[RMDB]
RNA sequence: GGGAACGACUCGAGUAGAGUCGAAAAGAUAUGGAUAAAUACUUGCGAUAAGAAGCAUUCGGAAACGAAUGAUUUCUUUUGACGCAAGUUUAUCCUAAGUCAAAAGUCCUUCCUUCGGGAAGGACAACCUACGGAGUUACUUCGGUAACUCCGUAGGAAAAGAAACAACAACAACAAC
Reactivity to DMS in 0.01 (KOAc 150mM, MgCl2 10mM, bicine 150mM(pH8.5), 24C), signal-to-noise 1, nucleotides 027 to 126: g000a020u010a170u010g010g000a030u000a000a070a060u010a150c060u000u000g020c000g030a200u000a030a010g010a040a000g010c000a000u000u000c020g010g000a060a040a080c010g000a010a000u010g000a080u020u010u000c000u000u000u000u000g000a260c070g010c000a000a020g000u000u000u000a000u000c000c000u000a010a120g000u000c020a100a090a110a190g010u000c000c000u000u000c000c000u000u030c300g050g000g020a000a020g000g010a010c010a000a040
Reactivity to 2A3 in 0.01 (KOAc 150mM, MgCl2 10mM, bicine 150mM(pH8.5), 24C), signal-to-noise 1, nucleotides 027 to 126: g010a000u040a020u160g000g020a010u010a010a050a020u170a200c000u020u020g000c020g110a160u060a300a000g000a000a010g010c000a000u000u040c000g030g050a010a040a010c010g000a000a020u030g000a010u020u000u000c000u000u160u080u300g300a110c040g000c000a000a000g000u000u000u000a000u000c000c000u000a010a060g000u000c020a000a090a170a080g000u000c010c000u000u010c030c010u060u080c300g170g000g000a010a020g000g000a000c000a000a000